[RMDB]
RNA sequence: GGGAACGACUCGAGUAGAGUCGAAAAAUGCCAGCGCUGUGCUGGGUACUGAAAUAAAACUGUUGUGGGGAGAAUAAAACAGACACAGUCCCUCCUCACAUGGACCUAGUGUACGUGUGUGAUCAUGUGGACGUGGGGAAGUAUCUGUGUGCUGCUGGACUGUGCUAAUCUUCGGAUUAGCACAGUCAAAAGAAACAACAACAACAAC
Reactivity to 2A3 in 0.01 (KOAc 150mM, MgCl2 10mM, bicine 150mM(pH8.5), 24C), signal-to-noise 2, nucleotides 027 to 156: a000u160g070c000c000a010g000c090g000c250u250g070u220g180c000u000g000g030g010u040a120c070u110g050a050a050a080u170a020a130a110a050c130u040g030u030u010g000u060g070g070g010g010a060g070a130a140u130a090a070a000a020c000a000g030a000c000a000c000a020g020u070c050c000c000u000c000c000u020c030a000c000a010u030g050g000a050c040c070u100a080g030u020g130u300a050c100g040u100g010u010g080u050g100a160u150c000a030u040g020u000g080g060a070c080g010u220g000g040g000g000a120a000g050u100a050u010c000u020g000u000g000u050g090c000u000g000c040u040g020
Structure probing data (2A3) for a 207-nucleotide construct. The data come from the RNA Mapping Database (RMDB), library OK3TST. The reactions ran in a buffer of 150 mM KOAc, 10 mM MgCl2 and 150 mM bicine (pH 8.5), at 24 C. 2A3 adducts were read by reverse transcription with SuperScript II with manganese.